Chemical mapping of a 177-nucleotide RNA with 2A3 and DMS. The data come from the RNA Mapping Database (RMDB), library TTRDEL. For DMS, 7,314 sequencing reads were counted. The reactions ran in a buffer of 150 mM KOAc, 10 mM MgCl2 and 150 mM bicine (pH 8.5), at 24 C. High DMS reactivity at an A or C suggests that its Watson-Crick edge is free.

[RMDB]
RNA sequence: GGGAACGACUCGAGUAGAGUCGAAAAGAUAUGGAACCUCUACCCACCGAACUACAGCGAUGCGGUCGGAAACGACCGGGCAGCUGCGAGGAGGUUCCUAAGUCAAACAGUGUCUUCGGACACUGAACAUGUUAUAGUCGUUCGCGACUAUAACAUGAAAAGAAACAACAACAACAAC
Reactivity to 2A3 in 0.01 (KOAc 150mM, MgCl2 10mM, bicine 150mM(pH8.5), 24C), signal-to-noise 4, nucleotides 027 to 126: g050a060u200a160u260g000g010a010a010c010c000u010c020u100a300c020c050c050a060c030c050g050a090a040c110u190a070c300a010g010c020g140a100u190g170c000g010g000u000c000g050g000a060a060a040c000g000a000c000c000g000g020g030c050a020g010c000u030g010c000g010a030g010g000a010g000g000u010u000c000c000u010a040a010g100u070c110a070a090a140c000a060g010u000g000u000c000u020u090c290g130g000a000c010a000c000u000g000a020a020
Reactivity to DMS in 0.01 (KOAc 150mM, MgCl2 10mM, bicine 150mM(pH8.5), 24C), signal-to-noise 6, nucleotides 027 to 126: g010a100u000a140u010g010g000a020a000c010c000u000c010u010a120c070c030c050a300c150c070g000a070a060c080u020a160c010a010g010c010g000a140u020g010c000g020g000u000c000g010g000a050a060a110c010g010a000c000c000g010g010g010c140a270g020c000u010g010c020g010a130g010g010a030g010g000u000u000c000c000u000a010a070g000u010c110a070a090a200c000a010g010u000g010u000c000u000u010c190g010g000a010c010a010c000u000g000a080a190